About this RNA
The record gives the reactivity of an RNA of 177 nucleotides to DMS and 2A3. Reactivities are given for positions 27 through 126. The RNA was probed in 150 mM KOAc, 10 mM MgCl2 and 150 mM bicine (pH 8.5) at 24 C.
RNA sequence: GGGAACGACUCGAGUAGAGUCGAAAAAUGGAAAAGAAAACAUGGAAGGGACCCCAGUUUGAGGAAGAUGUCAACUUGGGAAGUGGAACGCGGGCAGUAGGGAAGCCUCUCCUCAAUUCUGAUACUAGAAUCAAUUUGAGUUCGCUCAAAUUGAUUCAAAAGAAACAACAACAACAAC
Reactivity to DMS in 0.01 (KOAc 150mM, MgCl2 10mM, bicine 150mM(pH8.5), 24C), signal-to-noise 2, nucleotides 027 to 126: a040u040g020g000a050a060a080a150g000a110a090a060a100c040a020u010g010g020a050a070g040g000g000a150c040c000c010c020a060g020u000u010u000g000a030g000g000a080a050g010a060u000g010u000c090a040a040c050u020u010g010g010g000a080a070g020u010g000g010a040a020c140g010c120g050g000g000c090a070g030u020a070g000g010g020a080a080g000c050c020u010c040u000c010c010u010c070a040a100u020u010c040u010g020a090u010a110c160u000a140
Reactivity to 2A3 in 0.01 (KOAc 150mM, MgCl2 10mM, bicine 150mM(pH8.5), 24C), signal-to-noise 2, nucleotides 027 to 126: a000u080g040g030a040a130a010a010g060a010a170a010a000c030a010u060g050g020a020a050g070g000g030a020c030c000c000c010a030g020u060u090u090g030a000g030g030a070a040g020a090u070g040u140c030a010a030c090u040u030g000g010g050a050a040g050u110g030g050a100a050c090g010c040g110g000g000c010a040g040u160a060g080g010g040a000a090g040c000c010u030c010u000c000c000u000c000a020a080u180u010c050u010g040a040u050a130c030u030a090
For 2A3 the reverse transcriptase was SuperScript II with manganese.